RNA sequence: GGGAACGACUCGAGUAGAGUCGAAAAGAAAGAAAGAAUACCUAAAACAAUGAAAGCCCUACCUCUCUUCCAUCCUUACGGCUCCUUGUCCGUGCCAGUGUGAAUCAGGAUACUAAAAAAAGUGAAAUAGUAAUACACGGUUCGCCGUGUAUUACUAAAAAGAAACAACAACAACAAC
Reactivity to DMS in 0.01 (KOAc 150mM, MgCl2 10mM, bicine 150mM(pH8.5), 24C), signal-to-noise 3, nucleotides 027 to 126: g000a080a060a130g000a060a120a090g010a080a090u010a100c050c010u010a050a020a110a100c140a060a060u050g000a130a080a140g020c040c010c000u000a050c020c010u010c060u000c020u000u000c060c020a020u010c040c000u000u000a080c100g010g000c020u000c030c020u000u020g000u020c000c030g000u000g000c030c010a040g030u030g000u000g020a080a040u020c090a020g010g000a050u000a030c060u040a000a010a090a040a050a060a060g000u000g020a080a040a140
Reactivity to 2A3 in 0.01 (KOAc 150mM, MgCl2 10mM, bicine 150mM(pH8.5), 24C), signal-to-noise 4, nucleotides 027 to 126: g120a000a020a000g180a030a060a000g100a030a030u200a250c020c000u130a150a100a060a040c060a080a150u180g100a130a110a010g000c000c000c000u030a050c020c050u070c000u000c000u070u030c030c010a060u040c010c010u070u000a030c030g020g000c000u040c030c000u100u060g070u070c000c000g020u020g000c020c040a050g050u030g040u020g110a010a060u060c010a000g070g060a010u080a120c110u240a030a060a130a050a060a060a000g060u070g070a060a090a000